[RMDB]
RNA sequence: GGGAACGACUCGAGUAGAGUCGAAAAAGUGCUAGAAAAAUCUCCUGGGGAGUAAAGCUUUCAACUCCUCAGAAUAGAAGGUAAAACACAAUGUGAGUAACAAGAUAUGCAGGACUAUUAAUAAAGCCCCAGCUCAACCUUGCUGACUACUGUGGCAGAGUCAUUAUACCUUCGGGUAUAAUGACUCAAAAGAAACAACAACAACAAC
Reactivity to 2A3 in 0.01 (KOAc 150mM, MgCl2 10mM, bicine 150mM(pH8.5), 24C), signal-to-noise 1, nucleotides 027 to 156: a000g080u060g010c000u010a030g070a070a220a040a060a110u030c030u030c020c000u000g000g000g000g000a010g000u000a010a230a000g070c150u160u220u220c090a070a050c000u000c000c000u000c030a000g000a000a020u060a030g020a050a020g000g000u080a070a050a050a050c080a050c040a040a100u090g020u020g060a030g010u050a080a000c050a120a050g020a120u050a070u110g000c000a000g000g000a020c030u020a090u300u230a220a060u130a090a100a190g040c000c000c000c000a000g000c000u130c040a060a030c010c010u040u050g060c000u010g040a040c000u080a010c050u200g040u160g020g000c030a030